This 177-nucleotide RNA was probed chemically with DMS and 2A3. The data come from the RNA Mapping Database (RMDB), libraries RFM100 and RFMREP. The reactions ran in a buffer of 150 mM KOAc, 10 mM MgCl2 and 150 mM bicine (pH 8.5), at 24 C.

RNA sequence: GGGAACGACUCGAGUAGAGUCGAAAAUCGCCUGAUGAAAAUACCUUCCAGAGCAGAGAACAACAGUAGAAGUAUGCUGAAAAAGUUAGUAUGAGAAGUUUGAAUUGUUUAGAUAAUAUAAAAGUGAAAUCGUUUACGAUUUCGAUCGUAAACGAUUAAAAGAAACAACAACAACAAC
Reactivity to DMS in 0.01 (KOAc 150mM, MgCl2 10mM, bicine 150mM(pH8.5), 24C), signal-to-noise 5, nucleotides 027 to 126: u010c090g010c040c010u000g020a110u010g000a080a080a070a070u020a060c070c010u000u000c040c050a070g020a120g020c050a040g010a140g020a080a080c070a070a110c090a040g000u010a110g020a070a100g000u030a050u010g020c010u000g010a050a080a060a060a100g000u000u000a060g020u000a040u020g000a080g020a080a090g000u010u000u010g010a130a160u000u000g000u000u000u010a070g000a110u030a040a040u020a070u020a080a030a050a090g000u000g000a070
Reactivity to 2A3 in 0.01 (KOAc 150mM, MgCl2 10mM, bicine 150mM(pH8.5), 24C), signal-to-noise 2, nucleotides 027 to 126: u060c020g020c050c000u190g020a090u150g020a000a040a010a010u090a090c000c010u050u030c010c000a000g010a060g090c030a040g030a010g020a120a040c060a060a000c000a030g040u080a000g060a180a000g090u190a010u210g010c050u070g080a050a050a030a040a030g040u090u100a030g030u010a000u090g100a070g050a180a020g000u020u060u050g050a060a030u030u000g030u000u000u000a000g040a040u050a210a130u180a080u110a040a170a010a000g090u050g110a100